Chemical mapping of a 207-nucleotide RNA with 2A3. The data come from the RNA Mapping Database (RMDB), library RFM130. Conditions: 150 mM KOAc, 10 mM MgCl2 and 150 mM bicine (pH 8.5), 24 C.
RNA sequence: GGGAACGACUCGAGUAGAGUCGAAAAACACUCGACCAGAUUUUUUUGAUUUUCGAUUUCCAAACGCGAUUUAUUCCAAUCCGCCUUGUAGCAGACUAACCGGUGCACUUUUGCACGUGUACGCAAGACAAACAGUCACGUGUUCGCACGUGACUGAGCGGAUGACAUAGUUCGCUAUGUCAUCCGCAAAAGAAACAACAACAACAAC
Reactivity to 2A3 in 0.01 (KOAc 150mM, MgCl2 10mM, bicine 150mM(pH8.5), 24C), signal-to-noise 1, nucleotides 027 to 156: a000c010a020c020u060c000g050a010c020c020a070g010a100u080u020u020u050u000u050u180g160a120u150u060u080u020c010g000a040u020u060u090c090c000a130a070a080c050g000c020g010a030u000u000u060a040u260u060c010c000a020a020u050c090c000g040c010c000u000u030g100u090a060g010c040a010g040a090c160u070a150a070c020c020g060g000u010g050c060a110c070u160u190u050u230g000c000a000c070g020u020g010u040a030c020g010c110a000a020g080a010c090a030a150a000c000a060g040u000c000a010c000g000u030g030u080u050c160g050c060a000c010g000u000g000a000c000u000g000a000